An RNA of 177 nucleotides, treated with DMS and 2A3 and read out base by base. For 2A3 the reverse transcriptase was SuperScript II with manganese. The DMS profile rests on 2,999 reads. It was measured as part of the RMDB library OK2TRN. DMS adducts were read by reverse transcription with MarathonRT. High 2A3 reactivity points to a flexible backbone, as in loops and unpaired stretches. Conditions: 150 mM KOAc, 10 mM MgCl2 and 150 mM bicine (pH 8.5), 24 C.
RNA sequence: GGGAACGACUCGAGUAGAGUCGAAAAGUACAGCCUCUCUUACUGGGAAGAAUCAUAGCUUCCUAUGACCCGGAUAACAAGGAGGAACGCUCUAUCGCGAUUUAUCUAGGCAUAGGCUUAUGCCUUCGUUGUACCAGCUAUUCGUAGCUGGUACAACAAAAGAAACAACAACAACAAC
Reactivity to DMS in 0.01 (KOAc 150mM, MgCl2 10mM, bicine 150mM(pH8.5), 24C), signal-to-noise 4, nucleotides 027 to 126: g030u000a090c170a170g020c010c000u000c030u010c030u020u010a090c050u020g010g010g010a100a030g010a190a180u000c120a060u000a080g020c230u000u020c080c000u000a050u010g010a100c010c000c020g000g010a110u020a050a050c160a060a120g010g000a030g000g020a070a110c080g020c010u000c060u000a070u010c150g010c050g000a100u000u000u000a080u010c150u010a040g010g000c010a010u010a020g010g010c160u010u000a050u000g010c010c000u000u010c090
Reactivity to 2A3 in 0.01 (KOAc 150mM, MgCl2 10mM, bicine 150mM(pH8.5), 24C), signal-to-noise 3, nucleotides 027 to 126: g030u060a050c010a050g050c000c010u010c020u000c010u020u040a090c040u020g000g020g010a100a000g080a160a100u090c020a050u020a050g050c070u170u050c020c000u020a030u020g020a030c000c000c000g010g020a050u060a110a070c090a080a050g040g010a010g000g010a040a020c020g020c010u020c020u060a080u170c090g020c030g070a050u060u110u060a120u030c080u040a020g000g000c010a020u010a020g250g000c050u120u020a010u040g010c000c000u020u060c050